[RMDB]
This 177-nucleotide RNA was probed chemically with DMS and 2A3. 2A3 adducts were read by reverse transcription with SuperScript II with manganese. Conditions: 150 mM KOAc, 10 mM MgCl2 and 150 mM bicine (pH 8.5), 24 C. It was measured as part of the RMDB library TTRDES.
RNA sequence: GGGAACGACUCGAGUAGAGUCGAAAAGAUAUGGAAUCCUGGUGGGAGCUAUGUGGUCGGAAACGACCACCUAGCGAAGAACACCACGGGAUUCCUAAGUCAAAAGGUCAUGCUUCGGCAUGACCAACCAUACAUAAACCUUCGGGUUUAUGUAUGGAAAAGAAACAACAACAACAAC
Reactivity to DMS in 0.01 (KOAc 150mM, MgCl2 10mM, bicine 150mM(pH8.5), 24C), signal-to-noise 5, nucleotides 027 to 126: g000a000u000a030u010g000g000a010a000u010c000c010u010g020g050u000g020g020g010a060g020c000u000a000u000g010u010g000g010u000c000g020g000a000a010a030c000g020a020c000c000a000c000c030u000a000g020c000g020a120a220g010a120a120c150a300c000c000a010c000g000g000g000a010u000u000c010c000u010a000a070g000u000c010a100a070a140a140g010g010u000c000a010u000g010c000u000u010c240g020g010c000a010u000g010a010c000c000a010a030
Reactivity to 2A3 in 0.01 (KOAc 150mM, MgCl2 10mM, bicine 150mM(pH8.5), 24C), signal-to-noise 3, nucleotides 027 to 126: g000a000u010a010u040g000g000a000a000u020c030c010u190g270g110u120g040g050g020a300g020c000u010a000u020g010u010g000g020u000c010g000g020a000a010a000c000g000a010c010c000a000c010c010u010a000g000c010g000a020a020g090a050a030c070a010c020c000a000c020g010g000g010a000u000u000c000c000u000a000a000g000u010c010a000a020a100a190g000g000u000c000a000u010g000c000u080u150c300g170g010c000a000u000g000a000c000c000a000a000